[RMDB]
RNA sequence: GGGAACGACUCGAGUAGAGUCGAAAACGAUCUGAGUGCAGAUCGAGCCACGAUGACGUGGCAAACCACGCUAGGGAGGCGAAGCGUGGACAAUAACAAAUAAAAACGCUACAAGGACGGCGAUGUAGCGUCGCCUCCCAAAGAAAACGCCGUCCAACGCACAUACGUACUUCGGUACGUAUGUGCGAAAAGAAACAACAACAACAAC
Reactivity to 2A3 in 0.01 (KOAc 150mM, MgCl2 10mM, bicine 150mM(pH8.5), 24C), signal-to-noise 1, nucleotides 027 to 156: c040g010a030u000c000u010g040a020g200u190g100c010a000g000a000u000c000g000a060g000c000c000a010c000g090a200u280g070a060c020g000u000g000g000c020a000a000a000c020c000a000c010g000c000u010a020g000g000g000a010g020g000c000g040a000a000g000c030g000u000g000g040a050c080a000a090u210a050a010c010a020a060a000u150a010a060a010a000a000c000g000c020u000a000c000a050a000g030g000a000c000g010g000c020g040a030u080g020u040a000g030c000g000u000c000g000c000c000u040c040c000c000a030a040a000g020a010a080a010a010c000g010c010c020g000u010c000c000a000a040
The record gives the reactivity of an RNA of 207 nucleotides to 2A3. The RNA was probed in 150 mM KOAc, 10 mM MgCl2 and 150 mM bicine (pH 8.5) at 24 C. For 2A3, 910 sequencing reads were counted.